An RNA of 207 nucleotides, treated with 2A3 and DMS and read out base by base. It was measured as part of the RMDB library OK3TST. Values cover nucleotides 27 to 156. DMS adducts were read by reverse transcription with MarathonRT. 2A3 adducts were read by reverse transcription with SuperScript II with manganese. The DMS profile rests on 2,429 reads. The 2A3 profile rests on 1,173 reads. The RNA was probed in 150 mM KOAc, 10 mM MgCl2 and 150 mM bicine (pH 8.5) at 24 C.
RNA sequence: GGGAACGACUCGAGUAGAGUCGAAAAGGAAUGAGGAGCCUGCCCCACUCAGCAAGGUUACCGUUGUCCUCAAAAUUAUUGCGGUACACCUUAUCUGUUUCCUCCAGGUAAACGUAACGUACAUCCAGGUAGUCCUUUAUCACGACUGGAAUCCUAAGGUGAUACAAUGAUUCGUCAUUGUAUCACCAAAAGAAACAACAACAACAAC
Reactivity to 2A3 in 0.01 (KOAc 150mM, MgCl2 10mM, bicine 150mM(pH8.5), 24C), signal-to-noise 2, nucleotides 027 to 156: g030g010a030a120u030g000a020g030g010a000g070c000c000u060g020c010c020c000c000a020c000u190c030a000g050c060a040a000g020g000u020u010a000c000c000g040u080u110g150u180c040c070u090c000a040a110a110a020u300u200a100u180u160g000c000g030g000u020a010c030a000c180c000u030u020a090u140c050u020g010u030u090u030c010c020u000c000c020a040g000g040u040a070a090a040c110g030u060a090a000c020g020u100a070c030a100u040c010c000a050g030g020u060a020g050u060c020c020u120u110u100a190u230c070a010c090g110a040c040u030g030g030a030a080u110c010c040u090a120a120
Reactivity to DMS in 0.01 (KOAc 150mM, MgCl2 10mM, bicine 150mM(pH8.5), 24C), signal-to-noise 1, nucleotides 027 to 156: g000g000a040a040u000g000a150g070g050a230g000c030c000u000g000c030c010c040c040a090c070u000c050a070g000c110a050a020g010g000u000u000a030c010c000g000u010u000g000u010c050c090u020c020a080a130a130a190u020u020a120u000u010g040c010g000g000u000a040c070a110c030c020u000u000a000u020c050u000g000u010u000u010c050c000u000c280c020a070g020g030u000a030a070a030c050g010u000a070a070c040g040u000a100c080a160u000c010c020a030g000g030u000a120g000u000c060c080u000u000u000a090u010c050a070c030g020a120c030u000g020g000a090a280u000c020c030u000a090a300